[RMDB]
RNA sequence: GGGAACGACUCGAGUAGAGUCGAAAAUACCGCUAUUGAAAUGGCGGUAGAGAAGGCGAAAGAGAUUGGCUACCCGCUGGUGGUACGUCCGUCUUACGUUCUCGGCGGUCGGGCGAUGGAAAUCGUCAAGCGUGUAGCAAUUCGUUGCUACACGCUUAAAAGAAACAACAACAACAAC
Reactivity to 2A3 in 0.01 (KOAc 150mM, MgCl2 10mM, bicine 150mM(pH8.5), 24C), signal-to-noise 1, nucleotides 027 to 126: u010a000c000c000g000c000u010a030u090u200g180a120a210a140u050g010g000c000g000g020u000a000g000a020g010a020a030g050g010c040g060a060a030a070g050a010g020a010u120u090g030g000c000u010a050c020c020c020g070c150u120g070g120u040g030g010u070a060c060g030u040c000c010g040u000c010u080u050a010c020g020u070u000c040u000c000g050g010c070g020g000u010c050g000g010g040c000g020a010u040g040g060a030a140a070u040c000g040u010c060
Reactivity to DMS in 0.01 (KOAc 150mM, MgCl2 10mM, bicine 150mM(pH8.5), 24C), signal-to-noise 3, nucleotides 027 to 126: u000a020c010c000g010c000u010a040u000u020g020a160a110a150u000g000g010c010g010g000u000a000g000a140g010a110a110g030g000c030g000a070a080a080g020a180g010a020u000u000g000g000c000u000a060c040c000c060g010c270u000g030g010u010g000g000u000a010c120g020u000c060c070g010u000c050u000u000a150c090g000u000u010c020u000c020g010g010c070g000g010u000c060g000g010g000c000g000a020u000g010g010a090a150a050u000c020g020u000c030